[RMDB]
RNA sequence: GGGAACGACUCGAGUAGAGUCGAAAAGUGAAGCUUCGGCUUCACAAAAAAGCGUACUACUCUCUUUUGACGCUCGUAGACGGGAGUCCCAAAUAGGACGAGGAUCGUUGAAGAGCGAUAAGAGAGUAUCGCAAAAACGGACACUUCGGUGUCCGAACAGCCAUAUACGGUUCGCCGUAUAUGGCUGAAAAGAAACAACAACAACAAC
Reactivity to 2A3 in 0.01 (KOAc 150mM, MgCl2 10mM, bicine 150mM(pH8.5), 24C), signal-to-noise 1, nucleotides 027 to 156: g040u010g000a010a000g010c000u020u080c140g090g000c000u020u020c110a080c050a000a060a000a000a000a060g030c020g000u040a060c060u000a010c000u040c000u020c000u030u010u050u130g300a060c060g020c000u010c030g060u060a000g010a010c010g020g010g000a000g000u030c000c010c000a270a300a100u270a020g000g010a010c020g000a170g160g000a030u060c020g020u020u000g170a300a010g000a000g000c000g000a000u030a000a000g000a000g000a000g000u020a040u090c000g040c030a050a050a090a050a050c010g030g000a010c000a000c000u060u010c300g170g000u010g020u010c000c000g000a010a000

The record gives the reactivity of an RNA of 207 nucleotides to 2A3. Values cover nucleotides 27 to 156.